Chemical mapping of a 177-nucleotide RNA with DMS and 2A3. For 2A3 the reverse transcriptase was SuperScript II with manganese. The 2A3 profile rests on 6,787 reads. Reactivities are given for positions 27 through 126. 2A3 is a SHAPE reagent: it acylates the 2'-hydroxyl of flexible nucleotides of all four kinds. DMS adducts were read by reverse transcription with MarathonRT. The data come from the RNA Mapping Database (RMDB), library OK2TST.
RNA sequence: GGGAACGACUCGAGUAGAGUCGAAAACGUCACUAAGAGAGAAUAACUAUGACCCGCAAACAACGUGCAAUUUUUGAGCCGGCACUGGUUCGCACUGCACUGCUUGAUGCCGUGAAGAAACUGGAUCCUUCUACGUCUAAUUCGUUAGACGUAGAAGAAAAGAAACAACAACAACAAC
Reactivity to DMS in 0.01 (KOAc 150mM, MgCl2 10mM, bicine 150mM(pH8.5), 24C), signal-to-noise 6, nucleotides 027 to 126: c110g020u000c050a040c100u010a100a090g010a130g000a090g000a120a070u010a060a090c060u000a050u000g020a110c050c020c030g010c110a070a070a080c090a040a050c110g000u000g000c040a040a040u000u010u000u010u000g000a050g010c030c020g000g010c170a060c120u010g000g010u000u000c030g020c210a050c080u010g000c010a030c020u000g000c070u000u010g000a120u000g010c020c050g010u000g010a070a050g000a050a040a060c080u000g000g000a120u010c090
Reactivity to 2A3 in 0.01 (KOAc 150mM, MgCl2 10mM, bicine 150mM(pH8.5), 24C), signal-to-noise 5, nucleotides 027 to 126: c010g050u030c000a010c090u150a210a000g040a010g040a010g040a130a170u110a130a020c040u070a060u180g060a070c000c020c000g000c030a100a100a050c030a030a030c050g020u030g000c030a080a100u010u040u040u150u300g010a010g040c020c000g160g000c090a040c140u080g000g030u040u030c020g000c010a040c020u020g020c010a030c040u090g040c020u060u060g020a060u070g040c020c020g040u050g040a030a060g060a080a090a000c060u080g040g030a040u050c020